Background: Structure probing data (2A3 and DMS) for a 207-nucleotide construct. The DMS profile rests on 5,598 reads. The 2A3 profile rests on 4,292 reads. It was measured as part of the RMDB library OK3TST. High 2A3 reactivity points to a flexible backbone, as in loops and unpaired stretches. For DMS the reverse transcriptase was MarathonRT.
RNA sequence: GGGAACGACUCGAGUAGAGUCGAAAAUUGUCAGUCAACAUGUUUCAAGACGCUGUGUUAGACACUAGGGAUGCAAAGAUGAAUGAGAUAAGGCCUCAGGCCUCAUGGAAGGUGAGACAGUAAAGACAUUACUCCCAUAAAAAUGUGAGGAGAGAGACCUGCAUAAUUUAUUCGUAAAUUAUGCAGGAAAAGAAACAACAACAACAAC
Reactivity to 2A3 in 0.01 (KOAc 150mM, MgCl2 10mM, bicine 150mM(pH8.5), 24C), signal-to-noise 4, nucleotides 027 to 156: u080u030g050u050c030a030g020u030c030a030a020c030a170u100g050u020u070u070c060a070a060g050a040c050g000c070u050g010u000g020u110u080a050g030a050c010a010c060u050a030g030g040g000a030u040g040c040a070a050a050g030a040u110g040a100a100u060g010a020g030a090u090a120a030g010g000c000c000u110c050a030g030g000c000c000u030c020a010u040g030g030a030a030g020g010u030g010a020g010a010c010a010g020u060a040a090a020g010a010c010a010u020u040a040c020u000c010c010c000a020u130a030a150a060a010a010u140g030u030g020a060g000g010a020g030a000g010a010g060a040
Reactivity to DMS in 0.01 (KOAc 150mM, MgCl2 10mM, bicine 150mM(pH8.5), 24C), signal-to-noise 3, nucleotides 027 to 156: u010u000g000u000c040a140g020u000c040a110a110c080a150u000g010u010u000u000c030a080a140g000a100c070g010c070u000g010u010g020u000u000a060g020a150c020a040c030u000a090g000g000g000a070u000g020c060a050a060a120g000a060u020g010a080a070u000g000a090g000a080u000a080a040g020g020c030c020u000c090a100g020g030c010c000u010c010a030u000g020g020a120a100g020g010u010g010a120g000a060c010a150g010u010a040a060a080g000a070c020a070u000u000a090c050u000c020c010c020a080u030a050a080a060a080a110u000g030u000g000a090g000g010a090g000a250g010a230g000a160